[RMDB]
RNA sequence: GGGAACGACUCGAGUAGAGUCGAAAACAAUGGUAGGCGAGGGUGCUUAACGCUAACCCGUCUCUUGUGCUCCUAUCGCUGAAGGGGAGUUUCAUCCAGCACAGCAAGAGCAACCCGUGAUGGAGGCGACUGGGAUUACACUUGUCCUCGUAUAAGGCUUGAUUUAUCCCUUCGGGGAUAAAUCAAGAAAAGAAACAACAACAACAAC
Reactivity to 2A3 in 0.01 (KOAc 150mM, MgCl2 10mM, bicine 150mM(pH8.5), 24C), signal-to-noise 3, nucleotides 027 to 156: c040a040a130u130g110g020u130a030g060g000c020g030a100g010g030g010u030g010c010u170u210a130a030c100g000c010u020a050a070c000c020c010g020u020c000u000c000u020u120g020u030g010c000u000c010c030u040a140u190c100g010c020u020g020a240a110g050g020g020g050a030g010u030u190u190c010a030u000c040c030a010g010c050a050c010a060g000c020a020a050g010a010g000c040a040a110c090c070c030g030u080g040a080u090g010g030a010g060g000c010g030a020c100u060g070g000g030a060u100u110a050c060a030c060u070u050g050u070c000c010u030c030g030u050a070u020a210a020g050g020
Reactivity to DMS in 0.01 (KOAc 150mM, MgCl2 10mM, bicine 150mM(pH8.5), 24C), signal-to-noise 1, nucleotides 027 to 156: c040a090a160u030g000g030u000a070g000g000c010g010a050g000g050g010u000g000c050u010u000a090a100c130g040c040u000a190a150c010c010c030g000u010c010u000c030u010u060g030u000g020c020u000c020c040u000a150u010c070g000c010u010g000a100a220g000g010g000g010a150g020u030u040u010c020a170u010c020c010a040g050c080a230c080a050g020c070a060a140g040a090g010c030a050a080c090c000c000g010u000g010a120u000g010g010a130g020g030c020g030a020c020u010g020g020g000a110u010u000a030c020a070c010u000u020g010u010c010c040u000c070g000u000a160u000a110a110g040g040